An RNA of 177 nucleotides, treated with 2A3 and DMS and read out base by base. For 2A3 the reverse transcriptase was SuperScript II with manganese.

RNA sequence: GGGAACGACUCGAGUAGAGUCGAAAACCGGUCCCAGCGUCUGACGCUGCGCUUCGUGCCCGUGGAUCGCGAGGACACCACGUACUCGUACAAGGCGCGCUUCACUCUGGCCGUGGGCGACAACCGGACUCCCUUCACAUUUCGAUGUGAAGGGAGUAAAAGAAACAACAACAACAAC
Reactivity to 2A3 in 0.01 (KOAc 150mM, MgCl2 10mM, bicine 150mM(pH8.5), 24C), signal-to-noise 2, nucleotides 027 to 126: c000c010g000g010u040c040c010c000a010g000c020g030u060c280u290g060a030c030g000c050u050g030c030g000c010u040u020c010g090u130g010c000c010c040g010u020g020g030a040u040c030g010c010g070a090g110g070a030c020a050c100c010a020c040g060u070a070c020u050c130g050u030a020c030a100a110g060g000c000g000c000g000c010u030u020c010a030c030u080c110u100g000g010c000c030g040u140g000g000g000c030g030a040c010a050a020c000c020g010g020
Reactivity to DMS in 0.01 (KOAc 150mM, MgCl2 10mM, bicine 150mM(pH8.5), 24C), signal-to-noise 3, nucleotides 027 to 126: c010c020g030g020u000c020c070c010a080g000c030g020u010c140u010g020a050c040g010c030u000g020c030g010c050u020u010c050g000u010g010c010c010c290g000u010g030g000a100u000c030g040c060g010a080g020g000a170c160a220c070c050a060c130g030u010a090c110u020c170g000u000a020c070a160a170g000g000c040g020c030g000c120u000u000c030a020c030u000c120u000g010g030c000c000g010u000g000g010g000c050g000a080c120a090a080c020c030g000g000
Conditions: 150 mM KOAc, 10 mM MgCl2 and 150 mM bicine (pH 8.5), 24 C. For DMS, 2,690 sequencing reads were counted.